[RMDB]
RNA sequence: GGGAACGACUCGAGUAGAGUCGAAAAACAGUGGUUACGACCACUGAAAAGAAUAUGUGAUGAUCUCAGCCCAACUUGAACUCUCUCACUGAUGCCUUGAUGAUGUUCAAAGAUCUGAUAUUCUUAAGUACUCGCCCUAAUUCGUUAGGGCGAGUACAAAAGAAACAACAACAACAAC
Reactivity to DMS in 0.01 (KOAc 150mM, MgCl2 10mM, bicine 150mM(pH8.5), 24C), signal-to-noise 1, nucleotides 027 to 126: a070c000a000g010u000g000g020u000u010a140c190g000a090c000c000a040c000u040g000a040a050a070a040g020a060a000u000a030u000g060u050g000a100u040g030a010u020c030u000c030a100g080c000c000c030a170a030c230u060u010g000a070a080c070u000c040u030c010u030c120a040c120u060g010a060u000g010c140c090u040u000g000a050u030g010a010u000g000u000u020c080a040a140a060g000a110u000c090u010g010a060u000a030u000u000c000u000u000a020a300
Reactivity to 2A3 in 0.01 (KOAc 150mM, MgCl2 10mM, bicine 150mM(pH8.5), 24C), signal-to-noise 3, nucleotides 027 to 126: a010c020a000g000u020g010g000u060u090a070c240g070a010c050c000a000c000u000g020a000a020a000a000g080a050a050u100a090u130g100u050g080a110u110g010a000u060c090u090c120a030g000c010c010c000a020a030c070u010u080g030a040a000c000u030c010u010c010u030c070a040c060u070g030a150u140g010c000c010u020u090g050a040u080g010a000u090g070u050u020c020a060a070a000g030a080u000c000u080g050a020u020a120u070u010c000u030u050a110a040